[RMDB]
RNA sequence: GGGAACGACUCGAGUAGAGUCGAAAAACGCGCCCAAGGUUCCAGCACGUAUAUGGAACCCGACGAGAUCCUCGACGUUGCCCGCCGAGGUGCCGAAUUCGGUUGCAAGGAAGCGCUAUUCACUCUCUAAUGACAGAUUCUUCGGAAUCUGUCAUUAAAAAGAAACAACAACAACAAC
Reactivity to DMS in 0.01 (KOAc 150mM, MgCl2 10mM, bicine 150mM(pH8.5), 24C), signal-to-noise 4, nucleotides 027 to 126: a090c110g020c050g020c060c010c040a120a130g010g000u010u000c000c000a030g040c160a150c240g010u010a120u010a090u010g000g010a000a020c020c000c030g000a050c060g000a110g000a180u000c030c000u000c010g010a040c040g000u000u010g030c210c220c000g010c030c030g010a020g000g010u000g000c040c030g000a150a130u010u000c030g000g000u000u010g000c080a110a120g020g000a090a090g000c030g010c030u000a090u010u010c120a100c090u000c040u000c040
Reactivity to 2A3 in 0.01 (KOAc 150mM, MgCl2 10mM, bicine 150mM(pH8.5), 24C), signal-to-noise 1, nucleotides 027 to 126: a010c030g050c000g000c000c000c000a040a080g040g000u000u000c040c010a020g010c050a050c260g200u200a140u040a040u300g020g000a020a010c000c000c000g040a020c000g010a010g040a080u060c000c010u000c000g000a000c020g030u050u170g110c020c040c040g010c010c010g000a050g000g000u060g040c050c050g080a080a160u110u060c030g050g000u050u120g090c040a080a110g070g000a060a090g000c010g010c020u020a080u080u190c140a160c050u050c000u000c020
Source information: This 177-nucleotide RNA was probed chemically with DMS and 2A3. Values are in units of 0.01, from 0 to 300, in steps of 10. The reactions ran in a buffer of 150 mM KOAc, 10 mM MgCl2 and 150 mM bicine (pH 8.5), at 24 C.